[RMDB]
RNA sequence: GGGAACGACUCGAGUAGAGUCGAAAACAUUCUGAGAACAUCUGCACCGGUUUCCAAGGCUUCUCCCUCACUAAUUGCUCUGAUUAUUGUGUGAAGUGAAGCACUGGCACGUUUCCGCGAUGUUGUGCGUAGUAAGUCAAUUCGUUGACUUACUACGAAAAGAAACAACAACAACAAC
Reactivity to DMS in 0.01 (KOAc 150mM, MgCl2 10mM, bicine 150mM(pH8.5), 24C), signal-to-noise 9, nucleotides 027 to 126: c130a110u010u010c050u000g010a130g010a070a050c030a020u000c010u020g030c040a120c120c060g010g010u000u010u000c020c020a040a100g000g000c010u000u000c010u000c120c050c020u000c010a020c030u000a030a030u010u000g010c130u020c150u030g000a080u010u010a040u010u010g010u000g000u010g000a080a100g030u000g000a050a050g010c020a040c030u000g010g010c300a170c050g010u000u000u010c070c040g020c060g010a040u000g010u000u000g010u000g000
Reactivity to 2A3 in 0.01 (KOAc 150mM, MgCl2 10mM, bicine 150mM(pH8.5), 24C), signal-to-noise 9, nucleotides 027 to 126: c030a090u110u050c050u110g090a050g050a110a010c010a040u020c030u090g000c010a030c030c030g050g000u030u100u020c020c010a040a040g030g000c000u030u000c010u010c020c020c000u020c000a020c020u050a050a040u060u080g050c040u040c070u180g110a140u060u130a080u120u130g050u010g020u010g080a090a050g040u030g050a020a000g010c030a030c050u010g010g000c030a020c060g020u010u050u020c020c020g010c030g030a040u030g000u010u020g040u030g010